[RMDB]
RNA sequence: GGGAACGACUCGAGUAGAGUCGAAAAAUGGCGAAUGCAUGGGGAACUACAUCUGUGUCGCGAGUUCGAUUCUCGCCAGGGCCUGGUCCUGUAGCUCAGUUGGUAGAGCAAGCUGUUCCCCGCACACAAAAUCCAGCUAGGUUCGCCUAGCUGGAAACACACCGAAAGAGUUCGCUCUUUCGGUGUGAAAAGAAACAACAACAACAAC
Reactivity to 2A3 in 0.01 (KOAc 150mM, MgCl2 10mM, bicine 150mM(pH8.5), 24C), signal-to-noise 2, nucleotides 027 to 156: a000u090g080g020c050g090a120a010u060g070c060a100u200g010g000g010g010a040a020c030u090a030c090a140u170c020u020g060u040g040u150c000g000c000g000a000g020u000u000c010g010a010u000u030c000u000c000g010c010c000a000g010g020g020c060c300u210g110g040u030c000c000u000g000u000a000g000c000u010c010a040g020u130u170g070g140u230a000g010a000g040c000a000a000g010c030u050g020u010u000c010c000c010c000g000c000a010c010a010c000a020a150a000a030u000c000c000a000g000c010u000a000g000g070u020u010c160g080c050c000u000a000g000c000u010g000g020a000a000a000
Reactivity to DMS in 0.01 (KOAc 150mM, MgCl2 10mM, bicine 150mM(pH8.5), 24C), signal-to-noise 2, nucleotides 027 to 156: a040u020g010g000c040g000a120a080u010g020c050a190u000g010g030g020g020a040a050c020u010a060c040a100u000c050u000g080u000g060u040c020g030c000g010a090g000u000u000c020g000a300u000u010c020u010c010g000c000c020a100g000g020g000c040c100u010g090g010u000c000c020u000g000u000a050g000c010u000c020a070g030u000u000g040g030u010a030g000a020g020c000a180a190g020c080u000g030u000u000c000c000c000c020g000c090a090c070a060c080a070a070a130a060u000c010c000a000g010c010u000a060g040g000u000u020c300g040c040c000u000a010g020c000u000g010g000a000a010a090
An RNA of 207 nucleotides, treated with 2A3 and DMS and read out base by base. For DMS, 2,071 sequencing reads were counted. For 2A3, 1,211 sequencing reads were counted. Reactivities are given for positions 27 through 156. 2A3 adducts were read by reverse transcription with SuperScript II with manganese. Source: RMDB library M2RFPK, as collected in RNAgym. For DMS the reverse transcriptase was MarathonRT.